[RMDB]
RNA sequence: GGGAACGACUCGAGUAGAGUCGAAAAGCUUCAGGGGCCAGAGGAAAUGCUGCCAAAGCGUUAUUGGAAAACUUUGGUUUUGAACUGGUCAUUCAGUAUAACGAAAACAGGCAGAAGGUACAGAAGAACGGUAUAUCAGUUUCGACUGAUAUACCGUAAAAGAAACAACAACAACAAC
Reactivity to DMS in 0.01 (KOAc 150mM, MgCl2 10mM, bicine 150mM(pH8.5), 24C), signal-to-noise 3, nucleotides 027 to 126: g000c050u010u000c050a070g040g000g000g000c020c030a060g010a090g000g010a110a080a090u000g010c050u010g010c020c020a050a090a090g010c040g010u000u000a070u010u000g010g010a070a050a060a050c020u010u000u010g010g020u000u010u000u010g000a120a060c040u000g000g000u000c240a160u010u020c010a040g010u020a070u010a050a040c050g010a040a040a050a090c180a110g000g000c010a010g020a090a060g010g000u000a040c040a080g000a080a090g000a090
Reactivity to 2A3 in 0.01 (KOAc 150mM, MgCl2 10mM, bicine 150mM(pH8.5), 24C), signal-to-noise 2, nucleotides 027 to 126: g020c000u040u020c000a040g120g000g000g020c040c000a030g050a090g110g100a040a060a110u160g020c010u020g010c010c020a020a020a000g000c010g040u000u070a060u160u200g140g050a060a000a020a020c000u080u060u180g080g000u030u020u060u150g020a020a010c010u020g010g080u060c030a060u100u060c000a030g040u050a060u010a100a010c020g000a000a100a010a040c010a020g010g000c000a000g010a070a030g070g020u070a070c050a040g040a040a020g030a100